[RMDB]
About this RNA: Conditions: 150 mM KOAc, 10 mM MgCl2 and 150 mM bicine (pH 8.5), 24 C. An RNA of 177 nucleotides, treated with 2A3 and DMS and read out base by base. DMS (dimethyl sulfate) methylates the pairing face of unpaired adenines and cytosines. For 2A3, 1,310 sequencing reads were counted. For 2A3 the reverse transcriptase was SuperScript II with manganese. The DMS profile rests on 1,200 reads. Values cover nucleotides 27 to 126.
RNA sequence: GGGAACGACUCGAGUAGAGUCGAAAAGGUAUCGUGCCACGGCAUGUUCCACCUUGGCCAUUUGGUCACGGUCCAGAUAGUCGACCGGAUCGCCGUGCACAUAGACGAUGCCGAUCGUCCGGAUCUAGAGUUCUGUCUGCUUCGGCGGACAGAACUCAAAAGAAACAACAACAACAAC
Reactivity to 2A3 in 0.01 (KOAc 150mM, MgCl2 10mM, bicine 150mM(pH8.5), 24C), signal-to-noise 2, nucleotides 027 to 126: g000g000u020a000u030c000g020u030g220c090c020a000c000g000g000c020a040u150g060u020u000c030c000a030c040c030u020u040g000g000c000c010a100u180u070u290g010g000u050c040a030c180g010g010u050c040c020a040g080a030u120a050g090u070c030g000a050c000c020g020g000a010u020c080g030c010c000g000u010g000c000a030c000a000u080a070g080a000c080g000a000u000g020c000c000g000a070u060c010g120u000c010c010g020g000a000u000c000u020a050
Reactivity to DMS in 0.01 (KOAc 150mM, MgCl2 10mM, bicine 150mM(pH8.5), 24C), signal-to-noise 1, nucleotides 027 to 126: g000g060u000a000u000c060g000u010g000c300c060a050c060g000g000c000a100u090g000u000u010c020c040a070c250c100u030u060g000g000c050c000a170u000u090u030g000g060u000c010a170c150g000g000u000c000c090a270g000a090u070a060g060u010c020g010a030c260c210g000g000a090u010c090g030c010c050g000u000g040c010a060c100a020u110a160g000a060c060g000a050u000g000c040c000g000a020u050c160g050u000c000c000g000g000a130u000c000u030a120